This 177-nucleotide RNA was probed chemically with DMS. Source: RMDB library TTRINS, as collected in RNAgym.
RNA sequence: GGGAACGACUCGAGUAGAGUCGAAAAGAUAUGGAAACGAUUUCCAUGAAGAGCAUCGAUCUUAUGUGGCGUCGGAAACGACGCGUAACAUCAUAAGGGAGCUUUAAUGGAAAUCGUUUCCUAAGUCCACGUUCUAAGACUUCGGUCUUAGAACGUGAAAAGAAACAACAACAACAAC
Reactivity to DMS in 0.01 (KOAc 150mM, MgCl2 10mM, bicine 150mM(pH8.5), 24C), signal-to-noise 1, nucleotides 027 to 126: g000a120u010a300u000g010g000a020a010a030c000g010a040u000u000u010c000c000a000u000g020a170a300g010a060g040c000a290u000c210g020a050u020c000u000u000a000u010g000u010g020g010c000g010u000c000g000g010a110a060a250c000g020a000c000g000c000g020u000a020a170c190a010u030c000a010u000a000a020g010g000g020a010g020c000u040u000u010a260a000u000g000g000a050a050a010u000c000g000u000u000u000c000c000u000a030a050g010u000c010